[RMDB]
RNA sequence: GGGAACGACUCGAGUAGAGUCGAAAAGGACGGCCCGCGCGAGCGGGAGGACGGCGGGGCGAUAGCAGGUCUGUGAUGCCCUCAGACGCCCUGGGCCGCACGCGCGCUACACUGGCGGGGCCAGCCGCCCAUACCUAUACUUCGGUAUAGGUAUGGGAAAAGAAACAACAACAACAAC
Reactivity to DMS in 0.01 (KOAc 150mM, MgCl2 10mM, bicine 150mM(pH8.5), 24C), signal-to-noise 3, nucleotides 027 to 126: g000g010a110c100g010g000c020c020c000g010c030g000c030g000a090g040c010g020g010g010a010g020g010a060c010g010g030c050g000g010g010g020c010g010a120u000a180g000c060a030g010g010u010c100u020g000u010g000a190u000g000c080c000c000u000c060a120g020a170c020g010c010c000c000u000g000g000g020c010c010g000c070a060c020g000c010g000c010g000c050u010a100c140a120c140u000g010g030c010g000g010g010g010c030c020a100g010c020c010g010
Reactivity to 2A3 in 0.01 (KOAc 150mM, MgCl2 10mM, bicine 150mM(pH8.5), 24C), signal-to-noise 3, nucleotides 027 to 126: g030g020a030c030g020g000c010c020c020g050c010g010c010g020a030g010c020g040g060g020a030g000g020a020c000g010g030c010g000g010g010g000c010g100a130u090a050g060c100a010g050g210u110c110u080g080u060g060a080u160g020c000c030c000u010c060a110g020a050c010g000c000c000c000u030g030g130g060c000c000g000c000a010c000g030c000g010c000g010c020u110a070c070a050c160u130g060g010c050g010g000g000g050c000c010a010g000c010c000g020
Source: RMDB library RFMREP, as collected in RNAgym. This 177-nucleotide RNA was probed chemically with DMS and 2A3. DMS adducts were read by reverse transcription with MarathonRT. The reactions ran in a buffer of 150 mM KOAc, 10 mM MgCl2 and 150 mM bicine (pH 8.5), at 24 C. 2A3 adducts were read by reverse transcription with SuperScript II with manganese.